[RMDB]
RNA sequence: GGGAACGACUCGAGUAGAGUCGAAAAAACAUCAGAUGAACACAGUACUGUAAGAGAUUUUCUUGAGUUUUUAAAGUCUUGUACUAAAGGAGAGGUGGUAGAUGAACUCAACAACACUAACAUUUGCUCAUCAUUUACACUUCGGUGUAAAUGAUGAAAAAGAAACAACAACAACAAC
Reactivity to DMS in 0.01 (KOAc 150mM, MgCl2 10mM, bicine 150mM(pH8.5), 24C), signal-to-noise 3, nucleotides 027 to 126: a070a030c080a040u000c040a050g010a090u000g010a080a040c100a090c080a050g020u000a080c060u010g010u010a140a110g010a110g020a070u010u010u000u000c100u000u010g010a080g010u000u010u010u020u030a030a070a060g000u010c020u010u010g010u000a060c030u010a070a070a060g010g010a080g000a070g000g010u000g000g010u010a040g000a090u000g000a040a030c030u000c040a020a030c060a040a030c060a040c180u000a060a060c130a070u000u000u000g010c170
Reactivity to 2A3 in 0.01 (KOAc 150mM, MgCl2 10mM, bicine 150mM(pH8.5), 24C), signal-to-noise 2, nucleotides 027 to 126: a030a000c050a060u070c030a050g050a210u120g070a110a000c040a000c000a070g060u060a060c030u040g110u160a070a020g060a020g040a230u000u060u110u050c000u060u070g110a110g060u120u100u030u070u210a070a030a000g020u000c010u060u090g040u060a050c000u060a130a070a070g060g010a120g000a010g020g030u050g000g040u030a010g020a050u060g020a020a020c020u040c050a000a020c000a000a020c010a020c040u080a120a010c020a150u030u070u110g050c000
Notes: Structure probing data (DMS and 2A3) for a 177-nucleotide construct. In probing experiments dimethyl sulfate is read out at A N1 and C N3, which are open when not base-paired. For 2A3, 1,459 sequencing reads were counted. The DMS profile rests on 2,510 reads.